An RNA of 177 nucleotides, treated with 2A3 and DMS and read out base by base. DMS (dimethyl sulfate) methylates the pairing face of unpaired adenines and cytosines. The DMS profile rests on 7,100 reads. Conditions: 150 mM KOAc, 10 mM MgCl2 and 150 mM bicine (pH 8.5), 24 C. Source: RMDB library OK2TRN, as collected in RNAgym. The 2A3 profile rests on 2,541 reads.
[RMDB]
RNA sequence: GGGAACGACUCGAGUAGAGUCGAAAACUGCUGACGCUUCUUUAGUGUUCUUAGAGGUAGACAGUGUGAGCUUGCCGGAUGGGACACUGCGAUUUAAUGCACGAAGUGGAAUCACCGAACAGCGUGCCUUUAGGGCCUUAUUCGUAAGGCCCUAAAGAAAAGAAACAACAACAACAAC
Reactivity to 2A3 in 0.01 (KOAc 150mM, MgCl2 10mM, bicine 150mM(pH8.5), 24C), signal-to-noise 3, nucleotides 027 to 126: c020u050g020c040u030g030a020c000g000c030u010u000c020u040u300u200a030g010u020g020u110u040c010u030u080a060g020a040g090g010u020a020g030a100c050a100g100u080g040u070g220a090g020c040u060u080g060c000c000g110g010a080u120g010g030g000a000c000a010c030u030g000c000g020a060u000u040u300a180a060u200g010c050a000c080g010a040a010g000u020g020g040a040a030u070c030a050c110c020g030a060a030c010a010g050c000g050u070g050c020
Reactivity to DMS in 0.01 (KOAc 150mM, MgCl2 10mM, bicine 150mM(pH8.5), 24C), signal-to-noise 5, nucleotides 027 to 126: c080u010g020c040u000g000a130c070g010c020u010u000c030u000u010u000a040g020u000g010u010u000c030u000u010a150g010a200g000g000u000a040g010a060c060a090g020u010g020u010g020a120g020c030u000u000g040c050c000g010g010a130u010g000g000g010a030c030a010c020u000g010c040g000a100u010u010u000a100a120u010g000c060a080c090g010a040a040g020u000g010g010a100a120u000c050a160c060c030g000a060a110c060a050g010c010g010u000g010c120